Chemical mapping of a 207-nucleotide RNA with 2A3 and DMS. The RNA was probed in 150 mM KOAc, 10 mM MgCl2 and 150 mM bicine (pH 8.5) at 24 C. DMS adducts were read by reverse transcription with MarathonRT. The DMS profile rests on 5,296 reads. For 2A3 the reverse transcriptase was SuperScript II with manganese.
[RMDB]
RNA sequence: GGGAACGACUCGAGUAGAGUCGAAAACUAUCAAACUCCGGGGACACCCUAAAGCUUAUGAUACCAAACUAUAAUCGAAAGAUUAUAAGUGGCCAGAAUAAUUACCUGGGUAUGGUAAUAAGUCAUAAGAUAGAUGAAAAUCAAAUGGGCUAUCGCGCAUUACAUAAAUGUUCGCAUUUAUGUAAUGAAAAGAAACAACAACAACAAC
Reactivity to 2A3 in 0.01 (KOAc 150mM, MgCl2 10mM, bicine 150mM(pH8.5), 24C), signal-to-noise 4, nucleotides 027 to 156: c040u070a070u240c050a080a060a060c040u030c060c030g000g000g000g030a020c010a040c030c010c010u080a090a080a020g000c000u010u000a000u000g000a000u010a010c030c060a000a010a000c000u000a000u000a010a000u000c000g030a100a050a050g000a010u010u020a000u000a080a170g010u000g000g000c000c000a010g030a050a050u090a160a070u100u040a040c010c000u000g000g000g030u100a250u070g010g000u000a000a010u010a040a000g020u000c000a000u000a010a000g000a000u050a020g030a020u050g060a050a080a040a050u070c030a020a030a120u080g010g020g010c030u070a070u180c060g010c010g000
Reactivity to DMS in 0.01 (KOAc 150mM, MgCl2 10mM, bicine 150mM(pH8.5), 24C), signal-to-noise 3, nucleotides 027 to 156: c060u000a150u010c040a110a110a120c040u010c020c040g010g000g030g000a140c080a070c020c020c010u000a070a080a200g010c000u010u000a010u000g000a040u000a020c000c010a190a180a020c010u000a020u010a020a010u000c000g020a240a150a250g010a030u010u000a010u000a020a090g010u000g000g000c020c010a080g000a080a050u000a100a140u000u000a110c120c000u000g000g000g030u000a040u010g000g000u010a040a050u000a020a070g020u000c010a020u000a010a010g010a080u000a090g000a110u000g000a090a060a100a070u010c020a020a070a250u000g000g030g030c020u000a080u000c050g030c080g000